The record gives the reactivity of an RNA of 177 nucleotides to DMS and 2A3.
The RNA was probed in 150 mM KOAc, 10 mM MgCl2 and 150 mM bicine (pH 8.5) at 24 C.
The DMS profile rests on 1,639 reads.
[RMDB]
RNA sequence: GGGAACGACUCGAGUAGAGUCGAAAAGUGCAGUCCAGAUCGUCGUGCGCCAUCAGCCGGCGGGCCGCCUCGGUUAUCGAACCCGACAACGAUGGGUAAACGGCCAGUGUCUGGGCCAGCUCGUUGAACUCCUAAAUCCGUUCGCGGAUUUAGGAGUAAAAGAAACAACAACAACAAC
Reactivity to DMS in 0.01 (KOAc 150mM, MgCl2 10mM, bicine 150mM(pH8.5), 24C), signal-to-noise 2, nucleotides 027 to 126: g000u010g030c030a170g000u010c020c000a030g010a020u000c010g000u000c020g000u030g040c190g010c140c120a070u010c100a160g020c040c050g010g010c010g000g010g040c050c050g010c100c090u010c020g030g010u000u010a120u010c020g020a060a150c110c130c010g000a060c020a020a090c060g010a040u000g010g000g010u010a070a160a290c050g010g010c000c050a150g010u010g000u000c020u000g010g000g000c000c030a110g010c010u000c050g010u010u010g000a160
Reactivity to 2A3 in 0.01 (KOAc 150mM, MgCl2 10mM, bicine 150mM(pH8.5), 24C), signal-to-noise 1, nucleotides 027 to 126: g070u060g040c030a000g010u000c000c000a000g010a000u020c010g000u020c020g000u080g070c040g130c130c070a110u090c020a090g040c030c020g040g010c000g030g030g000c000c000g080c020c030u030c020g010g110u190u170a160u300c030g000a070a150c000c090c020g000a040c010a090a020c040g030a040u170g000g010g010u050a090a120a020c000g000g000c000c070a080g120u040g000u120c020u040g020g000g000c010c000a030g020c000u030c030g050u050u100g000a050